RNA sequence: GGGAACGACUCGAGUAGAGUCGAAAAGGGUUGAACACACGUUUAAUUGAAACAGUUCAGCUUAAGAUAUAGUCCAAUCCAGUGUGGAAACGCACUGGUCUAAAAGAUAGAAAAUGGGAGCCUGCGGCUUAAUUUGACUCAACACGGGGAAACUCACCAGCAAAUAAAUGUUCGCAUUUAUUUGCUGAAAAGAAACAACAACAACAAC
Reactivity to 2A3 in 0.01 (KOAc 150mM, MgCl2 10mM, bicine 150mM(pH8.5), 24C), signal-to-noise 1, nucleotides 027 to 156: g040g000g010u000u000g010a010a000c020a000c040a060c190g020u060u020u050a270a210u120u250g130a110a010a010c000a000g000u000u000c010a010g000c010u040u030a060a000g000a000u050a060u060a210g030u000c020c000a010a010u010c010c000a010g000u000g000u020g010g040a120a000a000c000g000c030a000c000u000g020g010u000c000u000a010a000a000a060g020a000u180a070g140a060a020a030a060u070g050g060g000a080g020c080c220u210g020c160g010g000c000u000u010a010a050u040u080u070g020a000c010u000c030a000a000c010a060c090g000g000g000g020a070a040a040c020u030c040a040c010